[RMDB]
RNA sequence: GGGAACGACUCGAGUAGAGUCGAAAAAGGAAAGUCAACAAUCCCUCAAUAUCCGGGCUACGAUUGUUCCAAUGUGCUACAGGUGCACAUUAUAAACUACACAUGAUUUUUGACCACCUAGACAUCAUGCUAAUUUCGAAUUCGUUCGAAAUUAGCAAAAAGAAACAACAACAACAAC
Reactivity to 2A3 in 0.01 (KOAc 150mM, MgCl2 10mM, bicine 150mM(pH8.5), 24C), signal-to-noise 2, nucleotides 027 to 126: a000g100g000a040a080a030g010u030c030a030a050c000a000a100u000c010c020c000u030c000a070a110u110a060u130c060c020g030g020g020c010u050a020c080g090a080u000u080g050u100u050c040c000a010a000u020g030u000g010c030u050a060c030a180g160g090u030g000c000a000c010a010u020u040a030u020a020a060a020c030u140a040c040a020c000a070u050g030a110u060u040u020u060u140g020a020c020c000a050c010c000u010a030g030a200c020a030u110c020a010
Reactivity to DMS in 0.01 (KOAc 150mM, MgCl2 10mM, bicine 150mM(pH8.5), 24C), signal-to-noise 3, nucleotides 027 to 126: a040g000g010a060a060a160g000u010c030a040a080c080a110a110u000c020c050c030u010c070a090a090u030a070u010c080c140g020g000g020c080u000a070c080g010a050u000u010g000u010u020c080c080a080a000u010g020u000g000c010u010a230c230a080g020g000u000g000c030a020c040a020u010u010a100u000a060a050a050c050u000a040c040a050c080a050u000g030a050u000u000u000u000u000g000a070c000c060a160c040c040u010a050g000a080c130a030u010c130a060